The record gives the reactivity of an RNA of 177 nucleotides to 2A3 and DMS. For 2A3 the reverse transcriptase was SuperScript II with manganese. It was measured as part of the RMDB library RFMREP. Conditions: 150 mM KOAc, 10 mM MgCl2 and 150 mM bicine (pH 8.5), 24 C. Reactivities are given for positions 27 through 126.

[RMDB]
RNA sequence: GGGAACGACUCGAGUAGAGUCGAAAACUACGUGAUGAGCAAUUCUUUAUUACUAGUUAUCCCUGGCAGAACUACUGUGUUGAUAACAUUACAACUCUGAAUCAAAAGUGCAUUGUUCGCAAUGCACGUACCAACUGUAGUUCGCUACAGUUGGUACAAAAGAAACAACAACAACAAC
Reactivity to 2A3 in 0.01 (KOAc 150mM, MgCl2 10mM, bicine 150mM(pH8.5), 24C), signal-to-noise 9, nucleotides 027 to 126: c020u040a030c110g010u010g000a020u010g000a010g030c120a190a300u270u110c060u050u190u120a030u020u020a030c010u010a010g020u020u030a040u050c010c000c010u030g100g000c020a020g010a090a030c040u130a050c040u130g020u010g060u140u080g120a160u090a190a050c030a090u060u190a050c020a060a020c020u010c010u120g080a080a090u120c060a100a110a070a050g010u000g000c000a010u010u010g010u040u050c150g000c060a000a000u000g000c000a010c010
Reactivity to DMS in 0.01 (KOAc 150mM, MgCl2 10mM, bicine 150mM(pH8.5), 24C), signal-to-noise 7, nucleotides 027 to 126: c010u000a010c270g010u010g010a010u000g010a010g010c300a160a140u000u010c070u000u000u010a020u010u000a010c020u010a010g000u000u000a170u000c010c010c000u000g010g010c020a030g000a050a050c110u000a090c130u000g010u000g010u000u010g010a130u010a080a070c060a030u000u010a060c120a080a100c100u000c020u000g000a070a090u000c080a020a070a070a170g010u000g000c000a000u000u000g010u010u010c180g030c010a010a010u000g000c000a000c000